[RMDB]
RNA sequence: GGGAACGACUCGAGUAGAGUCGAAAAAUUUAAAAGGUCCGUAGUCAGUGUUGACAGGGAUGCUAGAAGACACUUUCUUCAUGGAGUGUAUUGGCAUUCUAGGUUAGCAUGUAGGAGCGGAAGAGGGAGAAUAGAACCUGUUCGCAGGUUCUAUUCUAAAAGAAACAACAACAACAAC
Reactivity to DMS in 0.01 (KOAc 150mM, MgCl2 10mM, bicine 150mM(pH8.5), 24C), signal-to-noise 4, nucleotides 027 to 126: a100u030u030u040a070a060a100a100g010g000u000c010c010g010u010a090g010u010c030a180g000u000g020u010u000g010a000c010a240g000g000g010a010u000g000c000u000a040g000a080a080g000a010c010a000c010u000u000u030c050u020u060c280a120u050g020g000a010g010u010g020u000a060u020u010g000g000c000a010u000u010c000u000a080g010g010u000u000a020g010c000a010u000g010u040a060g010g000a220g010c000g020g000a030a060g020a130g020g000g010
Reactivity to 2A3 in 0.01 (KOAc 150mM, MgCl2 10mM, bicine 150mM(pH8.5), 24C), signal-to-noise 4, nucleotides 027 to 126: a000u170u180u170a060a060a040a010g100g010u010c020c000g000u040a040g120u140c030a030g010u000g000u040u030g010a020c010a010g000g000g060a000u000g000c000u020a030g040a210a030g090a070c000a000c010u130u180u300c050u300u200c120a210u300g010g030a000g000u010g000u030a080u040u120g010g000c020a010u000u000c000u010a030g060g060u000u010a000g010c010a000u050g030u140a080g020g110a030g000c010g000g010a040a010g050a060g070g070g020

The data come from the RNA Mapping Database (RMDB), libraries RFM100 and RFMREP. This 177-nucleotide RNA was probed chemically with DMS and 2A3. In probing experiments dimethyl sulfate is read out at A N1 and C N3, which are open when not base-paired.